An RNA of 177 nucleotides, treated with 2A3 and DMS and read out base by base. The reactions ran in a buffer of 150 mM KOAc, 10 mM MgCl2 and 150 mM bicine (pH 8.5), at 24 C. For DMS, 8,996 sequencing reads were counted. 2A3 adducts were read by reverse transcription with SuperScript II with manganese. For DMS the reverse transcriptase was MarathonRT. It was measured as part of the RMDB library OK2TRN.

[RMDB]
RNA sequence: GGGAACGACUCGAGUAGAGUCGAAAAAUUACUGGGUGGCUACCUGUGUUGGGAAAACAGAGGGUAAAGGUAGCCUGAACAGGUAAAGGGAAGUGCCUGCGUCCUGGGGUGCUUCAGCCCAGGUGGGAAUUUCCAAGAUUUUCGAAUCUUGGAAAUUAAAAGAAACAACAACAACAAC
Reactivity to 2A3 in 0.01 (KOAc 150mM, MgCl2 10mM, bicine 150mM(pH8.5), 24C), signal-to-noise 2, nucleotides 027 to 126: a000u150u130a050c070u040g020g040g000u050g030g000c000u000a000c000c000u050g040u020g120u220u100g010g030g030a030a110a060a000c030a040g070a090g050g030g000u040a090a070a000g000g000u000a000g000c000c000u000g000a020a000c010a010g080g010u070a100a040a050g040g000g020a010a040g020u000g020c020c000u100g160c030g040u070c020c010u010g000g000g000g030u100g030c070u150u050c040a020g010c040c000c010a010g040g040u050g040g070g020
Reactivity to DMS in 0.01 (KOAc 150mM, MgCl2 10mM, bicine 150mM(pH8.5), 24C), signal-to-noise 5, nucleotides 027 to 126: a130u010u010a100c080u010g000g000g010u000g010g010c020u000a010c000c010u000g020u010g030u000u000g010g010g010a110a090a070a090c080a110g010a150g000g000g000u010a050a110a040g000g000u000a010g000c000c010u000g000a060a080c030a030g010g010u010a040a070a140g000g000g000a100a070g000u010g000c000c000u000g010c090g010u010c030c010u000g000g000g000g010u000g010c130u000u010c080a100g010c000c000c010a040g000g000u010g010g000g010